[RMDB]
RNA sequence: GGGAACGACUCGAGUAGAGUCGAAAACGUUGUCAUCGACAACACCCUAUGCAUUCAUGCUCUGUAAGGAUGCGCCGAAAGGUGAGCAAGCCCGAGUUGCCCAGACCUGAAAUGCAACACUUUAGGGAAAACCCGAAGCAGUUCGCUGCUUCGGGAAGAAAUGCAAAUAGUUCGCUAUUUGCAUUUCAAAAGAAACAACAACAACAAC
Reactivity to DMS in 0.01 (KOAc 150mM, MgCl2 10mM, bicine 150mM(pH8.5), 24C), signal-to-noise 3, nucleotides 027 to 156: c110g040u010u010g010u000c040a190u010c120g030a060c000a040a040c020a120c000c010c010u000a070u000g010c000a060u000u010c040a180u010g010c000u000c040u000g010u000a300a170g000g000a080u010g020c000g030c040c020g000a090a120a170g010g000u010g000a060g010c030a180a200g010c040c030c030g000a170g020u000u000g010c010c010c030a150g000a140c010c020u000g010a020a040a060u000g020c070a050a110c060a070c040u000u000u000a060g000g010g010a100a070a120a110c000c000c000g010a020a010g000c000a050g020u010u010c280g040c000u010g010c000u000u000c000g000g000g010a000a010
Reactivity to 2A3 in 0.01 (KOAc 150mM, MgCl2 10mM, bicine 150mM(pH8.5), 24C), signal-to-noise 5, nucleotides 027 to 156: c100g000u010u000g010u010c090a240u130c300g020a010c000a020a010c010a070c000c000c000u030a030u060g010c000a000u020u010c030a060u170g000c010u010c000u010g010u010a000a010g000g010a000u000g000c000g000c000c000g060a080a040a020g000g000u020g000a010g000c030a020a020g020c000c010c010g080a080g030u020u040g030c010c010c050a050g060a130c030c060u080g040a050a060a070u120g020c010a050a000c030a030c070u110u120u190a070g000g000g000a020a050a010a030c000c000c000g000a010a000g000c000a000g010u050u160c190g060c120u000g010c000u000u010c000g000g000g000a000a000